[RMDB]
Structure probing data (2A3 and DMS) for a 177-nucleotide construct. For 2A3, 1,311 sequencing reads were counted. It was measured as part of the RMDB library RFMREP. The reactions ran in a buffer of 150 mM KOAc, 10 mM MgCl2 and 150 mM bicine (pH 8.5), at 24 C.
RNA sequence: GGGAACGACUCGAGUAGAGUCGAAAAGCUGAUGACGAGGCGGCUGUUGCGCUGGCCGCUGCUGUACUUGCUGACGUUGCUGCAUUUGUCUCAGAUGUUUUCGCUGCGGCUGCCGAUGCGGCUGCCGGAGAAGGAUCAACUUCGGUUGAUCCUUCUCAAAAGAAACAACAACAACAAC
Reactivity to 2A3 in 0.01 (KOAc 150mM, MgCl2 10mM, bicine 150mM(pH8.5), 24C), signal-to-noise 1, nucleotides 027 to 126: g000c020u010g040a120u100g050a070c050g100a070g000g050c010g020g000c030u030g010u060u190g030c050g030c000u020g030g000c010c010g000c000u020g000c000u010g040u060a080c020u080u060g010c000u030g030a040c030g120u140u100g110c120u090g000c000a150u030u040u190g050u010c000u000c060a050g020a120u080g070u010u070u050u090c010g000c020u060g010c000g000g000c000u000g000c000c000g000a080u120g030c020g010g000c030u000g020c020c000g010
Reactivity to DMS in 0.01 (KOAc 150mM, MgCl2 10mM, bicine 150mM(pH8.5), 24C), signal-to-noise 2, nucleotides 027 to 126: g010c020u010g000a070u000g010a120c100g010a200g000g000c010g020g010c010u000g010u010u000g010c140g020c060u000g010g010c010c060g050c010u000g020c030u010g010u000a050c070u000u000g010c040u000g010a080c110g010u000u000g000c030u000g000c030a090u000u000u000g010u000c060u000c030a110g000a080u000g010u000u010u000u010c120g010c080u010g010c000g010g010c000u000g000c150c070g010a180u000g020c040g010g010c000u000g010c000c040g020